[RMDB]
RNA sequence: GGGAACGACUCGAGUAGAGUCGAAAAUUCGCUGAUUACAAACCCCUGAGGUAGAAAGUCCCAAAGCUCGUGCUAAAGCAUCUGCCGUUUAGUGUUGCAGUUUAGCCUUUUGUACCUUUCCACGGCUCAAGAAUACUGAUUUCGAUCAGUAUUCUUGAAAAGAAACAACAACAACAAC
Reactivity to 2A3 in 0.01 (KOAc 150mM, MgCl2 10mM, bicine 150mM(pH8.5), 24C), signal-to-noise 4, nucleotides 027 to 126: u050u010c030g010c060u050g030a110u100u210a120c090a120a130a150c010c000c000c020u070g040a040g020g010u050a050g080a070a060a020g040u050c030c010c000a030a050a020g020c030u040c060g050u060g010c020u050a080a030a030g010c010a060u030c020u070g010c030c030g050u060u080u080a120g010u090g100u150u120g030c030a020g000u020u050u060a020g010c020c010u040u050u020u060g060u070a060c020c000u020u070u020c020c020a050c020g030g010c020u000
Reactivity to DMS in 0.01 (KOAc 150mM, MgCl2 10mM, bicine 150mM(pH8.5), 24C), signal-to-noise 4, nucleotides 027 to 126: u010u020c080g020c060u010g010a090u010u020a070c110a080a160a170c060c020c010c050u010g010a090g000g010u000a050g000a060a050a050g000u010c030c010c020a060a110a090g010c050u010c020g010u010g000c060u000a050a050a090g010c040a060u000c080u000g010c030c010g000u010u000u020a060g030u000g000u030u010g010c050a070g010u000u020u010a090g020c060c000u000u000u000u000g010u010a060c060c030u010u000u010c030c040a050c100g020g000c110u000